[RMDB]
RNA sequence: GGGAACGACUCGAGUAGAGUCGAAAAACAAGCUGCACGUGCGUGCGAGCAGUUUUCGAAAUCGCACGUUUCACGUAAAGACGCAACUCUACUCGAGAAAGCGAGUCACGCAGACAGCGUGAAGGAAACCCACCAAUUUAUUCGUAAAUUGGUGGGUAAAAGAAACAACAACAACAAC
Reactivity to 2A3 in 0.01 (KOAc 150mM, MgCl2 10mM, bicine 150mM(pH8.5), 24C), signal-to-noise 4, nucleotides 027 to 126: a000c080a040a040g070c030u040g010c060a010c020g020u020g010c010g000u000g000c000g010a040g090c080a050g010u020u020u140u240c060g050a080a030a040u010c000g020c000a000c020g010u040u150u130c040a010c010g020u030a010a060a030g080a030c040g000c040a000a020c010u000c000u000a010c000u000c000g000a000g000a010a000a010g020c010g010a030g080u010c000a000c020g000c000a050g060a300c040a050g030c000g000u030g000a000a000g080g020a090a080
Reactivity to DMS in 0.01 (KOAc 150mM, MgCl2 10mM, bicine 150mM(pH8.5), 24C), signal-to-noise 5, nucleotides 027 to 126: a120c180a110a110g010c010u010g000c300a030c000g030u000g000c060g010u000g020c000g000a020g000c140a130g020u010u000u030u010c120g000a030a090a140u010c010g030c010a040c000g010u000u000u000c040a010c030g010u000a030a180a030g010a260c060g040c060a080a030c000u010c000u000a010c020u000c010g000a020g000a020a050a120g010c030g000a140g000u000c010a010c020g000c000a090g010a110c200a160g000c010g030u000g010a020a080g000g010a090a100

The data come from the RNA Mapping Database (RMDB), library M2PK90.
The record gives the reactivity of an RNA of 177 nucleotides to 2A3 and DMS.
The RNA was probed in 150 mM KOAc, 10 mM MgCl2 and 150 mM bicine (pH 8.5) at 24 C.
Reactivities are given for positions 27 through 126.
In probing experiments dimethyl sulfate is read out at A N1 and C N3, which are open when not base-paired.